Source: RMDB library RFMREP, as collected in RNAgym.
Structure probing data (DMS and 2A3) for a 177-nucleotide construct.
RNA sequence: GGGAACGACUCGAGUAGAGUCGAAAAUCCUAUUUCAGAACUUUGGCCGGCUCGGAAUAGAAUCAGGGGGUGCAAACUGCCCACUGGCAGAAAGGAUUAUAGCAAAUGCGUACCCUAUUGCAAUACACGCUAAUUAAUUCUUCGGAAUUAAUUAGCGAAAAGAAACAACAACAACAAC
Reactivity to DMS in 0.01 (KOAc 150mM, MgCl2 10mM, bicine 150mM(pH8.5), 24C), signal-to-noise 1, nucleotides 027 to 126: u000c010c000u000a050u020u020u010c060a060g000a060a080c050u000u000u010g000g010c040c060g000g000c000u000c060g010g000a040a030u000a030g020a090a130u020c050a100g000g000g000g000g000u000g020c060a070a080a150c100u010g000c000c000c100a070c130u000g010g000c050a040g010a160a090a090g000g020a110u020u010a080u010a110g010c050a050a130a100u000g010c040g010u000a110c020c010c020u010a100u000u000g020c050a020a080u000a080c160a090
Reactivity to 2A3 in 0.01 (KOAc 150mM, MgCl2 10mM, bicine 150mM(pH8.5), 24C), signal-to-noise 1, nucleotides 027 to 126: u030c020c000u020a040u000u130u030c030a030g020a090a030c000u070u130u080g030g000c000c020g030g030c050u000c000g030g000a040a070u120a110g100a070a060u060c040a050g000g020g000g040g040u010g000c030a050a100a100c010u050g000c000c000c010a070c080u130g050g000c010a010g070a040a070a000g070g030a000u120u020a110u210a100g000c030a020a120a100u160g010c030g010u050a060c000c000c010u020a120u040u120g000c020a000a100u060a180c030a010
For DMS the reverse transcriptase was MarathonRT. For 2A3, 1,099 sequencing reads were counted. The RNA was probed in 150 mM KOAc, 10 mM MgCl2 and 150 mM bicine (pH 8.5) at 24 C. For 2A3 the reverse transcriptase was SuperScript II with manganese. The DMS profile rests on 1,067 reads.